An RNA of 177 nucleotides, treated with 2A3 and DMS and read out base by base. The reactions ran in a buffer of 150 mM KOAc, 10 mM MgCl2 and 150 mM bicine (pH 8.5), at 24 C.
[RMDB]
RNA sequence: GGGAACGACUCGAGUAGAGUCGAAAAUGAAGAUAGGUACAUGACUGAGUUCUUUAAGUGCACUACCAUCCCACUGUGGACUCGGACGCUGGAAAGUCAAUUUAGCAAUCGUCCAACUAGAUUGUAGGAGACGACUAGCAUUCGUGCUAGUCGUCUCAAAAGAAACAACAACAACAAC
Reactivity to 2A3 in 0.01 (KOAc 150mM, MgCl2 10mM, bicine 150mM(pH8.5), 24C), signal-to-noise 2, nucleotides 027 to 126: u120g050a010a000g090a060u070a060g000g070u040a000c000a100u180g090a040c010u010g130a190g260u090u000c010u200u190u170a150a000g040u010g050c020a000c130u000a170c040c000a110u030c020c020c000a000c010u010g090u100g030g140a140c000u000c000g000g070a030c030g000c000u120g070g020a120a060a000g000u000c010a070a080u090u110u020a030g060c000a000a190u100c000g140u000c000c000a080a070c020u000a090g050a270u070u110g010u090a010g110
Reactivity to DMS in 0.01 (KOAc 150mM, MgCl2 10mM, bicine 150mM(pH8.5), 24C), signal-to-noise 1, nucleotides 027 to 126: u010g010a130a000g000a110u000a020g000g000u080a110c140a060u020g020a250c000u000g000a080g000u000u000c000u040u000u000a180a120g090u050g000c090a000c130u000a230c140c200a200u110c010c030c000a010c090u000g000u050g000g000a000c000u000c020g000g000a080c080g030c010u000g000g040a110a070a060g000u000c080a040a060u000u000u000a100g000c110a030a020u000c000g000u010c140c000a190a130c170u000a010g000a000u000u000g000u000a020g000